[RMDB]
RNA sequence: GGGAACGACUCGAGUAGAGUCGAAAAAUCCCCCUGUGCGGUGGGGUGUAAUUGGUUAUCAAUGGAAACAGCUGUUUGUUUGCCACACGAGUCACGGUAUAGCCAGCCAAAGAUUCACCGGGAGGCAUUCUUAGCUAACGUUCGCGUUAGCUAAGAAAAAAGAAACAACAACAACAAC
Reactivity to DMS in 0.01 (KOAc 150mM, MgCl2 10mM, bicine 150mM(pH8.5), 24C), signal-to-noise 5, nucleotides 027 to 126: a110u010c020c000c000c060c040u000g010u020g010c050g020g010u000g000g010g000g010u000g010u000a070a200u000u010g000g030u010u020a040u020c070a150a080u020g000g000a070a060a070c060a060g000c130u000g010u030u010u010g010u000u010u010g020c010c020a070c150a110c100g000a080g010u020c070a070c190g000g010u030a030u020a110g000c040c020a040g050c040c040a120a130a080g000a100u000u010c020a040c010c020g000g010g010a060g010g000c100a130
Reactivity to 2A3 in 0.01 (KOAc 150mM, MgCl2 10mM, bicine 150mM(pH8.5), 24C), signal-to-noise 3, nucleotides 027 to 126: a000u020c010c010c010c000c000u040g020u100g160c010g000g050u030g000g030g010g000u030g010u000a070a070u040u030g020g020u060u070a040u100c080a150a060u070g030g020a060a030a010c030a050g110c110u190g110u110u150u030g030u050u050u110g270c000c000a080c000a010c030g050a030g060u090c030a010c080g000g000u090a040u040a050g010c020c000a000g000c010c000a080a110a000g100a120u050u020c020a030c030c000g000g030g040a020g010g000c040a050
An RNA of 177 nucleotides, treated with DMS and 2A3 and read out base by base. The reactions ran in a buffer of 150 mM KOAc, 10 mM MgCl2 and 150 mM bicine (pH 8.5), at 24 C. For 2A3, 1,459 sequencing reads were counted.